[RMDB]
RNA sequence: GGGAACGACUCGAGUAGAGUCGAAAACGCUUAAAAAUGCUCGCGGAACUGAUGCAGUGGGAGGCGACCGAUUGAAGCCAAUUGCAGACAUCAUGUGUGACUGAGUAUUGGUGUAGGCGAUAGCCUAGAGAACUAAACUCUUCGGAGUUUAGUUCUCAAAAGAAACAACAACAACAAC
Reactivity to 2A3 in 0.01 (KOAc 150mM, MgCl2 10mM, bicine 150mM(pH8.5), 24C), signal-to-noise 2, nucleotides 027 to 126: c040g000c040u080u070a050a060a060a030a070u050g000c000u030c040g050c030g180g070a100a040c010u050g040a070u070g050c030a010g020u090g020g060g020a050g000g050c020g010a020c020c000g300a300u000u230g030a030a010g030c000c000a000a000u030u040g000c020a020g060a120c010a010u050c030a050u120g050u040g030u050g090a100c060u060g000a000g040u010a030u000u030g100g000u150g060u070a020g030g000c010g050a070u100a030g000c000c000u030a050
Reactivity to DMS in 0.01 (KOAc 150mM, MgCl2 10mM, bicine 150mM(pH8.5), 24C), signal-to-noise 1, nucleotides 027 to 126: c080g000c010u000u000a010a090a080a090a080u010g000c040u000c030g010c080g010g010a160a090c040u030g030a050u000g010c070a120g050u000g000g010g020a300g010g000c000g010a090c110c080g030a110u000u000g010a140a300g010c000c010a060a160u000u030g000c010a110g020a120c050a000u000c010a100u040g000u000g000u000g000a160c060u000g000a010g010u010a020u000u000g000g020u000g050u000a050g010g000c020g000a040u010a080g000c050c000u010a060